RNA sequence: GGGAACGACUCGAGUAGAGUCGAAAACGAGAGCUCGACAUCUUCCGGGGAAUCGAUGUCUGAGGGGUAGUAGUAGGUCGAUACCCACUGAGGGGUCAUGGCGUAUGCCGAGGAGAGACGGAGCGGGUGACGUAUUAGUAUUCGUACUAAUACGUCAAAAAGAAACAACAACAACAAC
Reactivity to 2A3 in 0.01 (KOAc 150mM, MgCl2 10mM, bicine 150mM(pH8.5), 24C), signal-to-noise 9, nucleotides 027 to 126: c030g020a020g020a010g160c020u020c040g020a010c010a070u010c020u120u030c050c040g010g000g010g080a040a070u090c070g010a030u060g100u120c070u100g050a040g000g030g020g000u010a040g020u000a010g030u030a030g020g130u060c030g020a030u080a130c010c020c030a080c090u080g060a060g030g030g000g010u030c040a070u110g050g000c030g040u150a060u220g030c010c010g020a070g000g030a070g000a000g010a010c040g030g000a030g030c040g000g000g050
Reactivity to DMS in 0.01 (KOAc 150mM, MgCl2 10mM, bicine 150mM(pH8.5), 24C), signal-to-noise 9, nucleotides 027 to 126: c080g000a130g010a130g010c030u000c050g010a050c090a060u000c020u000u000c050c080g010g000g010g000a140a060u010c100g010a030u000g000u000c020u010g010a070g010g010g010g010u000a060g010u010a090g010u010a060g020g010u000c070g010a110u010a090c020c010c010a120c120u010g000a100g010g000g010g010u000c060a090u000g010g010c050g010u000a070u010g010c020c020g010a110g010g010a080g000a070g000a080c110g000g000a070g010c070g000g000g010